[RMDB]
This 207-nucleotide RNA was probed chemically with 2A3 and DMS.
The 2A3 profile rests on 1,120 reads.
The reactions ran in a buffer of 150 mM KOAc, 10 mM MgCl2 and 150 mM bicine (pH 8.5), at 24 C.
DMS adducts were read by reverse transcription with MarathonRT.
RNA sequence: GGGAACGACUCGAGUAGAGUCGAAAAGUAUUAUUUGCUAAAGAGCAACUUUAGGUUGCUGAAAAUGAAUUAUGGGUAGUGGAAUAGGUUAACCGUAAGACCUUUGGUUGAAAAACUAUGAAAUUAAAAAACCGUAAUACGUUCGCGUAUUACGGAAGUAUACUCCCUUGUUCGCAAGGGAGUAUACAAAAGAAACAACAACAACAAC
Reactivity to 2A3 in 0.01 (KOAc 150mM, MgCl2 10mM, bicine 150mM(pH8.5), 24C), signal-to-noise 2, nucleotides 027 to 156: g030u020a050u220u010a100u030u150u120g000c020u050a050a090a050g120a020g000c010a010a000c000u170u180u150a200g050g000u000u010g000c010u000g040a070a050a010a040u060g040a040a060u210u100a030u170g050g020g010u020a070g020u070g010g030a060a100u040a100g020g050u030u050a050a000c020c050g020u020a000a060g060a090c000c000u010u000u100g020g000u040u010g010a130a130a000a000a000c040u020a110u190g050a070a080a130u170u240a080a140a070a030a040a000c010c000g000u000a000a000u000a000c010g000u010u030c150g000c020g080u000a000u000u000a000c000g000g000a000a000
Reactivity to DMS in 0.01 (KOAc 150mM, MgCl2 10mM, bicine 150mM(pH8.5), 24C), signal-to-noise 2, nucleotides 027 to 156: g020u010a060u000u000a080u000u030u000g020c020u010a090a080a110g030a200g030c010a040a020c010u000u010u000a100g050g040u010u000g030c010u000g000a030a070a080a120u010g000a140a090u000u000a090u020g000g020g080u000a040g020u030g000g010a070a110u020a080g020g010u000u000a040a150c060c130g000u000a070a180g000a100c010c020u000u000u010g020g000u020u030g000a090a080a150a080a100c030u010a060u000g000a090a090a160u000u070a000a040a140a120a070a110c010c000g010u000a010a030u000a020c000g040u000u010c300g030c030g000u030a010u000u000a000c010g020g010a000a030